This 207-nucleotide RNA was probed chemically with 2A3 and DMS.
[RMDB]
RNA sequence: GGGAACGACUCGAGUAGAGUCGAAAAUUAACACCACAUGGAAGCCACCAAGGCUUAGGGUUUGUACUCUUCUGAAGCAAUGACCCAAGCUAUACCUUGGCUCAUUUUAGCCAUGGCUGGAGUUGGAACAGCCACAAUGAAGGGUGCCAUGUCUGGAAUUACCACUAGGAUUCGUCCUAGUGGUAAUAAAAGAAACAACAACAACAAC
Reactivity to 2A3 in 0.01 (KOAc 150mM, MgCl2 10mM, bicine 150mM(pH8.5), 24C), signal-to-noise 3, nucleotides 027 to 156: u080u010a020a020c010a050c060c020a010c010a020u050g050g050a030a020g000c010c010a110c040c090a180a160g020g000c020u040u050a110g030g000g020u050u090u080g020u100a040c000u000c010u140u040c050u150g060a120a000g000c040a020a060u060g000a000c000c010c000a010a000g030c000u080a070u120a270c010c030u000u020g010g000c000u000c020a040u020u050u080u220a000g000c010c020a040u050g010g000c000u020g000g050a170g090u100u110g020g090a070a020c000a000g000c000c000a020c080a060a060u140g010a020a010g050g000g010u000g030c050c010a030u060g030u030c050u040g010g050a060
Reactivity to DMS in 0.01 (KOAc 150mM, MgCl2 10mM, bicine 150mM(pH8.5), 24C), signal-to-noise 3, nucleotides 027 to 156: u000u010a090a120c030a280c040c010a070c070a100u000g000g020a110a090g000c030c020a140c040c130a090a210g030g010c020u000u000a070g020g020g010u000u010u000g000u000a050c030u000c010u000u010c060u000g020a120a100g040c010a100a070u000g000a040c030c000c000a020a040g010c060u000a130u010a050c140c010u000u010g020g000c020u000c090a100u000u010u000u000a080g000c010c050a120u010g010g030c010u000g000g000a110g010u000u010g010g010a090a150c020a050g010c000c010a020c070a080a090u000g020a110a070g000g000g020u000g010c010c020a050u010g010u010c020u000g000g000a300
It was measured as part of the RMDB library OK3TST.